[RMDB]
This 177-nucleotide RNA was probed chemically with DMS and 2A3. High DMS reactivity at an A or C suggests that its Watson-Crick edge is free. The DMS profile rests on 2,517 reads. Conditions: 150 mM KOAc, 10 mM MgCl2 and 150 mM bicine (pH 8.5), 24 C. For DMS the reverse transcriptase was MarathonRT. For 2A3 the reverse transcriptase was SuperScript II with manganese.
RNA sequence: GGGAACGACUCGAGUAGAGUCGAAAAGAUAUGGACCUUCUAGACAGCAAUCCAUUACUAUGGAGUACAAGGGUCGGAAACGACCCGUACUAUGAAGUAGUAAUGGAUUGCCGAAAGGUCCUAAGUCGGAUUAUACCUUGUUCGCAAGGUAUAAUCCAAAAGAAACAACAACAACAAC
Reactivity to DMS in 0.01 (KOAc 150mM, MgCl2 10mM, bicine 150mM(pH8.5), 24C), signal-to-noise 3, nucleotides 027 to 126: g000a120u020a300u000g010g010a000c000c010u000u000c300u010a200g040a240c300a180g010c000a020a000u000c010c010a020u000u000a010c000u000a010u000g020g030a300g010u000a000c030a110a130g000g000g020u000c000g000g000a090a120a210c000g000a020c010c000c010g020u000a020c300u010a090u000g000a220a240g000u000a000g010u010a000a000u000g010g000a030u000u000g000c010c010g010a070a050a030g010g000u000c010c000u000a010a080g000u000c120
Reactivity to 2A3 in 0.01 (KOAc 150mM, MgCl2 10mM, bicine 150mM(pH8.5), 24C), signal-to-noise 1, nucleotides 027 to 126: g150a050u230a170u290g000g000a000c000c000u030u000c140u150a150g010a220c120a050g000c020a010a000u010c010c000a000u000u000a000c000u000a010u030g050g050a040g020u030a030c060a210a300g040g000g000u010c010g020g020a130a140a040c010g010a000c000c050c000g000u000a010c000u030a300u220g030a050a000g010u020a000g000u010a020a020u000g000g000a000u000u000g000c000c000g030a000a000a000g000g000u020c010c010u030a090a020g120u120c170